[RMDB]
An RNA of 207 nucleotides, treated with DMS and 2A3 and read out base by base. Conditions: 150 mM KOAc, 10 mM MgCl2 and 150 mM bicine (pH 8.5), 24 C. For DMS the reverse transcriptase was MarathonRT. Source: RMDB library M2RFPK, as collected in RNAgym. 2A3 adducts were read by reverse transcription with SuperScript II with manganese.
RNA sequence: GGGAACGACUCGAGUAGAGUCGAAAAGUCCUGCCAUGAGACCGCAACGAGAGCAUGUCGCAUCGAAUGGACCCGGGGAGUCGGCAGCUUGCCCCACGGAUGAGCGCCUAAUGCCGGCAUUCGGGAAAAUAGACUGGAUAGUUCGCUAUCCAGUCAACACAAUGCAAUCGUUCGCGAUUGCAUUGUGAAAAGAAACAACAACAACAAC
Reactivity to DMS in 0.01 (KOAc 150mM, MgCl2 10mM, bicine 150mM(pH8.5), 24C), signal-to-noise 1, nucleotides 027 to 156: g000u000c020c020u000g030c030c000a000u000g000a270g050a020c040c110g070c030a080a110c070g030a180g020a200g020c100a110u000g020u000c010g040c040a140u020c040g000a270a090u010g010g010a000c070c000c000g000g030g030g040a070g120u010c000g030g030c020a090g020c050u000u000g020c010c040c030c050a300c110g020g070a060u000g020a070g010c020g030c050c070u000a130a150u000g020c020c000g050g030c000a090u000u010c020g000g000g020a090a000a070a090u000a120g000a050c010u000g010g020a080u000a030g000u000u020c300g000c010u000a000u000c000c020a000g050u000c020a000a070
Reactivity to 2A3 in 0.01 (KOAc 150mM, MgCl2 10mM, bicine 150mM(pH8.5), 24C), signal-to-noise 4, nucleotides 027 to 156: g050u020c000c000u010g010c010c010a050u030g020a010g020a060c060c120g030c060a070a050c090g060a040g020a030g200c070a080u160g030u090c030g010c010a040u030c010g040a040a030u040g010g030a060c010c000c000g010g000g010g010a180g020u010c010g000g000c010a020g000c010u020u070g010c000c010c040c040a070c090g040g020a220u130g010a010g000c020g040c020c060u100a120a040u060g010c020c000g000g000c010a010u010u020c010g020g020g000a060a010a010a010u140a020g000a000c000u000g000g000a000u000a000g030u040u060c170g000c150u000a000u000c000c000a000g000u000c000a000a000